Structure probing data (2A3 and DMS) for a 177-nucleotide construct. Reactivities are given for positions 27 through 126. For DMS the reverse transcriptase was MarathonRT. The RNA was probed in 150 mM KOAc, 10 mM MgCl2 and 150 mM bicine (pH 8.5) at 24 C. For DMS, 3,713 sequencing reads were counted.
RNA sequence: GGGAACGACUCGAGUAGAGUCGAAAAGGGCCGAGAUGGCAGGAUGACGGAUCGUCGGGGGCGGGAACUCCCAGGCCGCCGGGCCGUCGCAAACCCGUCGCAAACCCGUCGCAAACCGUAAGGAGUCCACCUGUCUCCGAUUCGUCGGAGACAGGUGAAAAGAAACAACAACAACAAC
Reactivity to 2A3 in 0.01 (KOAc 150mM, MgCl2 10mM, bicine 150mM(pH8.5), 24C), signal-to-noise 3, nucleotides 027 to 126: g020g000g020c050c030g050a060g000a210u170g010g050c040a020g040g000a080u140g020a010c010g000g010a120u080c010g090u050c030g100g000g000g010g000c000g000g000g040a050a040c010u080c070c000c010a040g170g050c020c020g070c020c030g010g020g000c020c000g010u030c020g000c000a040a090a070c010c000c010g000u000c020g000c030a000a130a010c000c000c020g000u010c000g020c070a070a120a040c020c000g020u030a030a060g060g070a000g020u100c030
Reactivity to DMS in 0.01 (KOAc 150mM, MgCl2 10mM, bicine 150mM(pH8.5), 24C), signal-to-noise 3, nucleotides 027 to 126: g040g020g060c000c050g000a060g010a110u000g040g000c050a060g000g000a150u040g000a030c010g000g020a160u000c070g010u010c000g000g050g010g000g030c070g000g000g000a130a080c240u020c090c030c070a160g020g040c010c020g000c040c090g000g000g000c020c010g020u040c070g000c020a020a200a110c130c020c070g000u010c000g020c170a140a160a260c000c010c000g000u020c030g000c160a050a090a100c000c030g010u050a130a160g000g000a080g000u030c080